[RMDB]
RNA sequence: GGGAACGACUCGAGUAGAGUCGAAAAAUCAACAUCGUCACCAUCAUGCUGGGCCUCGCCGUGGGUUCGAAGAUGGAGGCCGACAAGUUCCUCAACCUCGAGACCCUGGGCGUGCUCGUCCUGGGUGUAUGUGGUGAGGGUUCGCCCUCACCACAUAAAAAGAAACAACAACAACAAC
Reactivity to DMS in 0.01 (KOAc 150mM, MgCl2 10mM, bicine 150mM(pH8.5), 24C), signal-to-noise 2, nucleotides 027 to 126: a020u010c020a040a140c300a090u000c060g020u010c000a070c020c010a040u000c010a070u000g000c100u030g000g030g020c000c010u010c040g030c180c210g040u020g030g000g000u010u000c010g000a150a020g020a030u000g000g000a080g020g000c190c020g020a050c120a030a130g000u000u010c000c010u000c070a050a060c030c000u000c090g030a160g000a020c010c000c000u000g000g010g020c020g000u020g030c210u000c000g000u000c000c000u000g010g000g020u000g020
Reactivity to 2A3 in 0.01 (KOAc 150mM, MgCl2 10mM, bicine 150mM(pH8.5), 24C), signal-to-noise 1, nucleotides 027 to 126: a000u070c020a020a040c000a080u030c010g060u000c020a000c040c010a000u020c070a170u070g050c010u070g000g020g010c000c020u030c050g200c110c050g060u230g010g020g000u040u040c000g000a000a030g020a000u080g040g000a020g010g000c020c000g010a010c050a090a030g000u040u030c000c000u020c010a070a050c030c030u040c020g110a030g090a100c010c040c010u060g040g000g000c000g030u160g130c110u120c070g030u070c000c020u060g040g020g000u010g050